[RMDB]
RNA sequence: GGGAACGACUCGAGUAGAGUCGAAAAACGUCCUCGUCGUACAGAACGGUAACAUGUUUUCCGAACAUCCGCGCUUGGGUAUACGAGUAUACACCUUACCCAACCCUCGCCAACGGGCAGGAUGGAAUUAAGGAGAGGGCCUUCGGGCCCUCUCCAACACAGGUAAUACGUUCGCGUAUUACCUGUGAAAAGAAACAACAACAACAAC
Reactivity to DMS in 0.01 (KOAc 150mM, MgCl2 10mM, bicine 150mM(pH8.5), 24C), signal-to-noise 2, nucleotides 027 to 156: a060c040g030u000c030c010u000c030g030u010c080g010u000a140c060a070g010a080a070c000g000g000u010a080a120c110a110u000g040u010u020u000u000c040c050g010a160a140c050a090u010c010c050g030c030g030c060u000u020g000g020g010u000a060u000a120c100g020a170g020u000a130u000a110c070a110c050c060u000u000a040c000c000c000a050a050c040c030c000u020c120g030c070c020a090a090c050g000g010g040c050a070g020g010a070u000g000g010a060a110u000u010a070a090g020g010a080g010a010g100g170g080c030c010u000u010c240g070g010g000c010c000c010u010c000u000c010c030a010a050
Reactivity to 2A3 in 0.01 (KOAc 150mM, MgCl2 10mM, bicine 150mM(pH8.5), 24C), signal-to-noise 2, nucleotides 027 to 156: a000c030g070u030c000c000u000c010g050u050c040g030u060a110c050a060g060a150a050c020g020g040u090a100a050c090a150u150g050u030u040u050u030c020c050g000a040a030c010a060u000c000c020g060c010g010c120u040u020g010g000g000u040a060u010a080c090g010a030g050u030a060u040a120c080a080c040c060u030u090a010c000c000c000a030a060c010c000c010u020c060g050c040c030a110a070c060g040g010g000c040a040g020g000a020u040g000g080a060a100u150u120a110a130g010g000a000g000a000g000g000g010c000c000u000u080c180g120g040g000c000c000c000u000c000u000c000c000a000a000
This 207-nucleotide RNA was probed chemically with DMS and 2A3. The 2A3 profile rests on 1,490 reads. The RNA was probed in 150 mM KOAc, 10 mM MgCl2 and 150 mM bicine (pH 8.5) at 24 C. For DMS, 2,554 sequencing reads were counted. It was measured as part of the RMDB library M2RFPK.